The record gives the reactivity of an RNA of 207 nucleotides to 2A3.
The data come from the RNA Mapping Database (RMDB), library ARCHII.
Values are in units of 0.01, from 0 to 300, in steps of 10.

[RMDB]
RNA sequence: GGGAACGACUCGAGUAGAGUCGAAAAAAGCGUCGUUGCGACCAAAUAAGCGCCGAUUCACAUCAGCGCGACUACGCUCUCGCUGCCUAAGCGACGGCUAGUCUGUCAGACCGGGAACGCCCUCGGCCCGGACCCUGGCAUCAGCUAGAGGGAUCCAGAUGUGGUAAAGGUUCGCCUUUACCACAUCAAAAGAAACAACAACAACAAC
Reactivity to 2A3 in 0.01 (KOAc 150mM, MgCl2 10mM, bicine 150mM(pH8.5), 24C), signal-to-noise 2, nucleotides 027 to 156: a000a000g100c090g030u050c050g090u150u140g050c060g040a090c000c030a080a060a090u250a200a070g010c020g000c010c030g060a050u140u230c150a060c020a110u020c020a020g000c010g000c010g000a000c010u010a000c180g000c020u010c000u000c040g000c010u020g020c010c130u120a080a020g000c000g000a000c010g010g000c000u010a000g000u000c040u110g000u020c020a000g000a010c000c010g020g000g010a000a000c020g040c000c000c020u000c000g000g000c000c000c040g000g030a030c100c010c000u000g000g000c000a050u080c030a080g170c010u140a070g000a000g000g000g010a000u020c000c020a020